This 177-nucleotide RNA was probed chemically with DMS and 2A3. For DMS the reverse transcriptase was MarathonRT. The RNA was probed in 150 mM KOAc, 10 mM MgCl2 and 150 mM bicine (pH 8.5) at 24 C. 2A3 is a SHAPE reagent: it acylates the 2'-hydroxyl of flexible nucleotides of all four kinds.
RNA sequence: GGGAACGACUCGAGUAGAGUCGAAAAGCUUGUGGAGUGGUACACAGUGUCCACGCCAGUGGUGGCCGUCAACGACAGCGCACCCGCGUACGACCAGAGCAUGCGCUCAGACUGGGGCACCCUGACCGUAGCGCUGAGGAUUCGUCCUCAGCGCUACAAAAGAAACAACAACAACAAC
Reactivity to DMS in 0.01 (KOAc 150mM, MgCl2 10mM, bicine 150mM(pH8.5), 24C), signal-to-noise 1, nucleotides 027 to 126: g000c060u010u000g050u010g070g040a250g010u000g000g060u000a070c040a030c100a130g000u010g000u000c000c030a080c060g010c080c080a080g010u020g040g020u000g010g020c020c010g030u000c030a110a180c200g010a130c300a030g000c050g000c000a060c100c110c140g000c010g010u020a140c110g000a030c060c060a070g000a110g050c110a110u020g000c030g020c020u000c070a100g020a060c070u000g000g000g000g010c010a010c020c020c000u010g020a020c030c140
Reactivity to 2A3 in 0.01 (KOAc 150mM, MgCl2 10mM, bicine 150mM(pH8.5), 24C), signal-to-noise 1, nucleotides 027 to 126: g050c050u160u160g040u060g040g050a090g010u080g030g050u110a080c110a010c040a130g050u040g020u130c010c000a040c020g040c040c020a050g010u170g220g000u020g000g060c020c000g000u030c030a300a160c100g050a050c050a020g000c020g010c060a080c060c000c030g000c000g050u150a110c010g040a110c070c030a020g000a010g050c000a050u110g060c050g000c010u030c050a070g000a080c060u100g040g000g000g060c000a040c020c000c000u040g000a040c080c000